[RMDB]
RNA sequence: GGGAACGACUCGAGUAGAGUCGAAAAUUCGCCUGAGUCUUUGUGCUUGAUCGCGAUGAACCUCCCUAGGGACCAGGUUUGCGGAUGCAGUCGGAGUGUGUAUGUGUUUGCUCACUCCGGCAACGUACACUUUUAAUUAUUUCGAUAAUUAAAAGUGAAAAGAAACAACAACAACAAC
Reactivity to DMS in 0.01 (KOAc 150mM, MgCl2 10mM, bicine 150mM(pH8.5), 24C), signal-to-noise 9, nucleotides 027 to 126: u000u000c050g020c010c090u000g000a090g010u000c010u000u010u000g020u010g020c030u000u000g010a080u010c200g010c030g010a080u010g000a100a180c120c060u000c010c010c020u000a080g010g000g000a070c050c060a050g000g010u000u000u000g020c040g010g010a090u010g010c120a160g010u000c000g010g000a030g010u000g010u000g000u000a040u010g010u010g010u010u000u000g000c000u000c000a010c000u000c000c000g010g000c000a020a010c110g010u000a160
Reactivity to 2A3 in 0.01 (KOAc 150mM, MgCl2 10mM, bicine 150mM(pH8.5), 24C), signal-to-noise 5, nucleotides 027 to 126: u040u010c020g020c020c010u050g020a070g030u000c040u070u240u180g090u140g040c010u060u080g050a080u190c050g010c020g110a100u110g070a070a080c000c020u010c010c000c020u030a060g020g030g010a010c010c030a010g020g010u040u050u050g010c020g010g020a040u100g040c030a010g010u000c000g010g000a010g000u010g020u000g020u030a040u100g280u020g070u060u160u070g000c010u000c000a000c010u000c000c000g000g010c000a010a000c000g000u020a020
Chemical mapping of a 177-nucleotide RNA with DMS and 2A3. The DMS profile rests on 35,120 reads. Values cover nucleotides 27 to 126. The RNA was probed in 150 mM KOAc, 10 mM MgCl2 and 150 mM bicine (pH 8.5) at 24 C. It was measured as part of the RMDB library OK2TST. For 2A3 the reverse transcriptase was SuperScript II with manganese. For DMS the reverse transcriptase was MarathonRT.